[RMDB]
Chemical mapping of a 177-nucleotide RNA with DMS and 2A3. It was measured as part of the RMDB library M2PK90.

RNA sequence: GGGAACGACUCGAGUAGAGUCGAAAAUAUUUCGCGCCAUUGUAGCUCAGUGCUAGAGCGCUUCACUCGUAUAAAAAUACUGCCAUGAAGAGGUCCGCGGUUCAAUGCCGCGUGGUGGCAAAAAAAAGUAGAUAUCUUUAUUCGUAAAGAUAUCUACAAAAGAAACAACAACAACAAC
Reactivity to DMS in 0.01 (KOAc 150mM, MgCl2 10mM, bicine 150mM(pH8.5), 24C), signal-to-noise 4, nucleotides 027 to 126: u000a120u000u000u000c040g010c270g010c000c010a040u000u000g010u000a070g000c020u010c120a110g020u010g010c220u010a010g000a040g000c030g010c010u000u000c030a040c120u000c150g020u000a040u020a010a090a110a090a110u000a030c050u000g020c170c140a100u000g000a030a020g000a010g000g010u000c030c010g000c010g000g010u000u000c130a110a130u000g000c010c000g010c000g020u000g000g020u000g000g010c000a000a000a000a050a030a070a050a110
Reactivity to 2A3 in 0.01 (KOAc 150mM, MgCl2 10mM, bicine 150mM(pH8.5), 24C), signal-to-noise 2, nucleotides 027 to 126: u150a050u020u090u060c060g000c010g010c030c010a030u030u050g040u050a010g010c010u010c130a080g030u040g150c040u070a010g000a030g040c000g020c000u010u030c010a050c040u070c040g000u050a060u070a150a240a040a080a000u050a060c040u060g020c010c010a040u050g000a040a030g020a020g020g030u000c010c000g000c010g010g020u030u060c040a070a040u120g000c000c000g010c000g000u000g000g000u000g000g000c000a110a080a010a020a000a000a010a010